[RMDB]
RNA sequence: GGGAACGACUCGAGUAGAGUCGAAAAGAAUUGGUAUGUAAGCUACUUCUUCCAGUAGCUGCGUCAUAACAUCAAGGUUAUGCAUACUGAGCCGAAGCUCAGCUUCGGUCCUCCAAGGAAGACCAUAUACAGCUCAGCCCGUUCGCGGGCUGAGCAACUAAACUUAGAAGUUCGCUUCUAAGUUUAGAAAAGAAACAACAACAACAAC
Reactivity to 2A3 in 0.01 (KOAc 150mM, MgCl2 10mM, bicine 150mM(pH8.5), 24C), signal-to-noise 4, nucleotides 027 to 156: g100a000a120u010u000g000g000u000a000u010g000u000a010a010g010c000u000a010c010u070u130c010u010u000c010c000a000g000u000a000g000c000u000g000c020g010u000c000a000u000a010a010c020a060u260c190a140a030g300g000u000u000a000u000g000c010a000u000a000c000u000g000a000g010c000c000g010a000a000g020c030u100c300a030g000c000u020u000c000g000g000u000c010c010u060c020c020a050a040g000g000a000a000g000a000c000c040a020u140a040u100a180c090a030g010c000u000c000a000g010c040c000c000g070u130u170c230g010c020g040g050g000c000u010g000a000g000c000a000a000
Reactivity to DMS in 0.01 (KOAc 150mM, MgCl2 10mM, bicine 150mM(pH8.5), 24C), signal-to-noise 2, nucleotides 027 to 156: g000a140a090u000u000g010g000u000a010u010g000u010a300a300g000c000u000a020c000u010u000c020u020u010c020c020a300g020u020a000g000c010u000g000c010g020u010c020a000u000a000a070c010a300u010c220a160a180g010g010u010u000a000u000g020c000a040u000a010c020u010g010a140g020c000c010g040a020a060g000c020u050c130a140g020c000u000u000c020g010g010u000c020c030u010c050c060a070a190g020g000a040a030g030a240c120c040a070u020a130u000a110c070a080g000c000u000c010a070g010c020c000c010g030u000u020c270g030c060g030g000g000c000u000g000a000g010c030a010a040
Source: RMDB library M2RFPK, as collected in RNAgym. An RNA of 207 nucleotides, treated with 2A3 and DMS and read out base by base. The 2A3 profile rests on 2,978 reads. For 2A3 the reverse transcriptase was SuperScript II with manganese. Values are in units of 0.01, from 0 to 300, in steps of 10. In probing experiments dimethyl sulfate is read out at A N1 and C N3, which are open when not base-paired. For DMS, 2,880 sequencing reads were counted.